[RMDB]
RNA sequence: GGGAACGACUCGAGUAGAGUCGAAAACGGUUGCCUCUCUGGGAGGGGACGGCGGGCCCAGUGAGGAUAUCGAUCAUUGCCGCGGAUAGCAUGGGUGUUCGUAGCCUGGCGACUCUCGUGGAGAGCGGAUAGUACGUCACUUCGGUGACGUACUAUCAAAAGAAACAACAACAACAAC
Reactivity to 2A3 in 0.01 (KOAc 150mM, MgCl2 10mM, bicine 150mM(pH8.5), 24C), signal-to-noise 5, nucleotides 027 to 126: c020g020g030u030u150g050c010c010u010c000u000c010u000g000g030g020a050g030g090g060g080a070c010g040g030c070g000g060g030c000c000c020a020g020u030g040a030g020g030a030u060a040u130c070g020a040u050c030a080u060u280g050c010c000g020c030g020g030a110u100a090g060c110a160u140g070g010g000u090g020u260u300c040g010u040a010g000c000c010u030g010g000c000g030a040c020u020c030u000c020g160u040g020g050a070g000a010g030c050g010
Reactivity to DMS in 0.01 (KOAc 150mM, MgCl2 10mM, bicine 150mM(pH8.5), 24C), signal-to-noise 2, nucleotides 027 to 126: c050g010g020u010u010g010c000c010u000c000u000c020u000g010g010g000a040g000g020g000g000a080c070g010g030c020g010g000g010c030c050c030a050g020u020g000a060g020g020a130u040a040u010c050g000a080u000c070a060u020u040g000c060c040g000c000g000g010a120u030a090g010c060a030u000g010g000g000u000g000u020u000c090g020u010a160g010c000c040u010g020g000c000g020a080c020u010c010u020c010g030u030g010g000a020g000a070g000c110g000